[RMDB]
An RNA of 177 nucleotides, treated with 2A3 and DMS and read out base by base. DMS adducts were read by reverse transcription with MarathonRT. The 2A3 profile rests on 3,794 reads. The DMS profile rests on 2,880 reads.

RNA sequence: GGGAACGACUCGAGUAGAGUCGAAAAGAUAUGGACUUCGGAUACAGCAUCGAUCUCGGAAACGAGGGAGCUGUAAUCCGAGAGUCCUAAGUCAAAAUCCGUGGACAGCUUCGGCUGUCCACGGAAACACAAUUGAUAACUUCGGUUAUCAAUUGUGAAAAGAAACAACAACAACAAC
Reactivity to 2A3 in 0.01 (KOAc 150mM, MgCl2 10mM, bicine 150mM(pH8.5), 24C), signal-to-noise 2, nucleotides 027 to 126: g050a030u110a060u170g000g010a010c010u000u000c010g000g010a000u000a020c000a000g020c040a190u300c120g080a120u030c030u000c000g020g070a110a070a060c020g000a020g000g030g000a010g000c000u000g000u010a040a170u000c000c010g000a000g010a000g000u000c000c000u020a070a020g060u020c030a050a010a000a300u000c010c000g020u000g030g050a030c060a020g030c040u170u190c300g240g000c000u000g040u050c000c040a010c020g000g020a000a000a000
Reactivity to DMS in 0.01 (KOAc 150mM, MgCl2 10mM, bicine 150mM(pH8.5), 24C), signal-to-noise 3, nucleotides 027 to 126: g000a030u010a300u000g000g010a010c000u000u000c010g010g000a050u010a010c010a010g010c000a300u000c150g000a060u010c010u000c000g000g010a150a100a230c000g000a030g000g000g000a010g030c000u000g010u010a020a040u010c000c000g020a020g010a010g010u000c000c000u000a050a050g020u000c020a150a090a110a110u000c000c010g030u000g000g000a030c010a020g000c010u000u020c230g020g020c000u000g000u000c000c000a020c010g000g000a000a010a140